RNA sequence: GGGAACGACUCGAGUAGAGUCGAAAAGACUGGGGAUGUGAAUACGGCACUGGAACAUCAGUGUACUAUCAUAACAGCGAUUGCUACAACAAAUGUAACAUAGGCCUCAGAGCUUCAUUAAAGUCUGAAGUUCCGGAUUUUACAGGCGAUGCCUGUGCAUCAGUAUGUGGUUCGCCACAUACUGAUGAAAAGAAACAACAACAACAAC
Reactivity to DMS in 0.01 (KOAc 150mM, MgCl2 10mM, bicine 150mM(pH8.5), 24C), signal-to-noise 3, nucleotides 027 to 156: g010a150c030u000g020g030g070g060a300u000g010u000g000a050a050u000a040c100g010g000c000a030c000u000g010g000a110a170c170a150u010c040a020g020u000g010u000a020c040u000a050u000c020a060u010a090a120c050a130g030c040g010a160u010u000g060c000u000a010c020a060a190c090a080a130a190u020g030u010a010a030c010a070u010a130g020g020c000c010u000c010a030g000a050g000c020u000u000c040a140u000u010a070a070a100g020u000c090u000g000a050a140g030u000u010c030c010g020g000a090u000u000u000u010a020c020a040g000g010c050g020a110u000g000c010c000u000g020u010g000
Reactivity to 2A3 in 0.01 (KOAc 150mM, MgCl2 10mM, bicine 150mM(pH8.5), 24C), signal-to-noise 7, nucleotides 027 to 156: g040a010c010u020g000g030g010g020a030u050g040u010g070a100a060u090a090c110g020g010c000a000c010u020g010g090a210a090c050a230u240c010a050g010u010g010u040a190c030u050a030u070c020a050u060a160a040c050a030g050c040g110a110u100u170g030c030u070a050c010a150a000c020a100a210a090u100g020u050a030a000c010a030u050a030g060g080c000c010u010c010a000g010a030g020c010u010u030c010a080u020u230a160a080a040g090u030c060u070g040a030a010g000u080u020c030c010g020g010a030u070u090u030u160a020c010a010g020g000c120g180a090u300g010c000c000u000g010u020g000
Source: RMDB library OK3TST, as collected in RNAgym. This 207-nucleotide RNA was probed chemically with DMS and 2A3. The reactions ran in a buffer of 150 mM KOAc, 10 mM MgCl2 and 150 mM bicine (pH 8.5), at 24 C.